[RMDB]
RNA sequence: GGGAACGACUCGAGUAGAGUCGAAAAAAGAGCUGUCGAUGACAGCACCCCAGGUGACCCGAACCUUGGAGGUCACGCCGCUCCCGCGGUGGUUCACCCGCAAGUACGAUUCGCGUCCGGCAGCUCGGUUAAAUUUUGUGUUCGCACAAAAUUUAACAAAAGAAACAACAACAACAAC
Reactivity to DMS in 0.01 (KOAc 150mM, MgCl2 10mM, bicine 150mM(pH8.5), 24C), signal-to-noise 3, nucleotides 027 to 126: a050a040g010a050g000c000u000g000u000c000g020a180u010g000a030c050a070g020c060a060c030c000c020c030a030g010g000u010g000a020c000c010c300g020a040a020c050c030u000u000g020g000a250g000g000u010c000a040c010g000c000c000g000c060u020c160c170c190g010c000g000g000u000g000g000u000u010c030a240c100c020c070g020c170a070a040g000u010a050c060g000a070u020u000c060g010c040g000u000c030c020g000g000c020a030g010c030u000c040g000
Reactivity to 2A3 in 0.01 (KOAc 150mM, MgCl2 10mM, bicine 150mM(pH8.5), 24C), signal-to-noise 7, nucleotides 027 to 126: a000a000g070a010g000c010u010g000u010c040g160a160u210g010a010c020a020g000c010a080c010c000c010c000a010g000g010u010g010a040c020c040c080g020a020a020c000c010u010u040g040g000a020g010g020u000c000a000c010g010c010c000g010c010u160c060c040c070g000c010g010g000u020g000g000u030u020c030a050c010c030c020g060c050a070a050g060u080a090c070g050a110u060u140c050g000c010g050u010c000c000g010g000c000a030g010c010u020c020g000